RNA sequence: GGGAACGACUCGAGUAGAGUCGAAAACAUCGCGACUUCGGUCGCGAUGAAAGUUGUGCUCCCUCACGCAUAACAAAUCCCAAAGAGGGUAGGUGACUGCAAAACGACACGCCUUCGGGCGUGUCAAUUAAGGUAAGUCAUUCGUGACUUACCUUAAAAAAGAAACAACAACAACAAC
Reactivity to 2A3 in 0.01 (KOAc 150mM, MgCl2 10mM, bicine 150mM(pH8.5), 24C), signal-to-noise 2, nucleotides 027 to 126: c000a010u000c010g000c020g000a010c000u050u040c220g080g000u010c000g000c000g010a000u000g000a010a000a000g010u000u010g000u010g000c020u080c040c060c000u010c000a030c200g040c000a000u010a040a010c010a010a100a080u030c000c000c000a000a030a020g060a010g000g020g040u030a010g040g100u060g030a070c080u080g060c060a000a100a080a090c120g000a000c000a000c020g000c000c000u070u100c300g040g000g000c010g020u020g000u000c000a000a000
Reactivity to DMS in 0.01 (KOAc 150mM, MgCl2 10mM, bicine 150mM(pH8.5), 24C), signal-to-noise 6, nucleotides 027 to 126: c010a010u000c010g010c000g010a020c000u000u020c190g040g010u000c000g030c000g020a000u000g010a020a050a090g000u000u000g000u000g000c010u000c060c000c020u010c020a240c240g000c010a010u000a010a020c010a070a120a130u000c000c000c000a060a070a080g010a030g010g020g010u010a030g010g010u000g000a150c060u010g000c110a050a060a110a100c170g010a020c000a010c000g000c000c000u000u010c200g020g000g010c000g010u000g000u000c000a010a040

Background
The record gives the reactivity of an RNA of 177 nucleotides to 2A3 and DMS. The data come from the RNA Mapping Database (RMDB), library M2PK50. Conditions: 150 mM KOAc, 10 mM MgCl2 and 150 mM bicine (pH 8.5), 24 C. 2A3 adducts were read by reverse transcription with SuperScript II with manganese. Values cover nucleotides 27 to 126.